RNA sequence: GGGAACGACUCGAGUAGAGUCGAAAAAAAUGACUUUGUGGCCAAAGUAGGCCAAUGCUUCCGGGGGGAACUCACGAACCGUCGAACUUUCCUCCGUUCUAAGCAACAAGCCCGUAACUCAGACGAUGUGCCGACGGUUGUCAGUCAACCCGCCACACACAUACUAGAGCUUCGGCUCUAGUAUGUGAAAAGAAACAACAACAACAAC
Reactivity to DMS in 0.01 (KOAc 150mM, MgCl2 10mM, bicine 150mM(pH8.5), 24C), signal-to-noise 1, nucleotides 027 to 156: a030a050a070u000g000a130c080u000u000u000g050u000g000g020c030c040a100a080a130g020u010a100g010g030c010c010a030a050u000g010c060u000u010c060c020g000g010g000g010g020g000a040a060c030u000c020a070c030g010a060a110c100c080g030u010c030g000a110a010c040u000u010u000c010c020u000c000c050g010u000u000c020u010a060a110g000c020a040a110c070a110a100g030c020c010c040g000u000a070a060c040u010c040a080g020a070c040g000a140u000g040u000g010c030c000g000a040c040g020g000u000u000g000u000c090a040g000u000c020a040a070c020c030c040g000c030c030a020c040a210
Reactivity to 2A3 in 0.01 (KOAc 150mM, MgCl2 10mM, bicine 150mM(pH8.5), 24C), signal-to-noise 3, nucleotides 027 to 156: a000a000a050u110g030a030c060u030u100u120g090u080g010g000c010c020a140a100a240g090u070a190g090g000c000c000a000a020u010g000c000u060u000c050c020g000g000g010g000g000g010a030a000c010u000c040a020c010g110a160a080c070c050g100u080c040g020a040a060c020u030u050u050c000c000u020c010c010g000u030u010c040u040a040a010g010c010a020a060c020a060a040g040c000c010c000g080u090a110a090c010u030c160a030g040a190c070g030a050u100g070u070g080c040c030g010a040c050g020g040u030u020g050u040c070a030g020u060c010a010a050c020c000c000g040c030c020a070c010a000